[RMDB]
RNA sequence: GGGAACGACUCGAGUAGAGUCGAAAACUGCCUAAAAACCAGCAGGCGUGACCCGAUUUGGAUUGCUCGUGUUCAAUGACAGGUCUUAUUAUUAGCGAGAUACGAUUAAGCCUUGUCUAGCGGCUUGAUAAGAGAUUGAUAGACUCGCAGUUUCUAGGACUUAACGGUUGUUCGCAACCGUUAAGUCAAAAGAAACAACAACAACAAC
Reactivity to 2A3 in 0.01 (KOAc 150mM, MgCl2 10mM, bicine 150mM(pH8.5), 24C), signal-to-noise 1, nucleotides 027 to 156: c050u050g000c020c010u060a230a060a000a000a000c110c010a080g100c050a000g080g000c090g080u150g000a020c010c010c000g020a020u000u000u050g040g000a010u070u000g020c000u000c010g000u000g000u060u000c050a040a080u060g000a020c020a040g030g090u030c150u090u150a200u070u120a080u050u090a000g020c000g010a000g000a020u000a050c000g000a000u020u020a000a000g000c000c010u080u230g010u050c010u000a010g080c010g000g000c000u030u000g000a000u000a000a000g020a020g060a150u070u300g120a040u040a060g010a020c000u010c150g170c020a020g000u000u000u010c020u000a010g080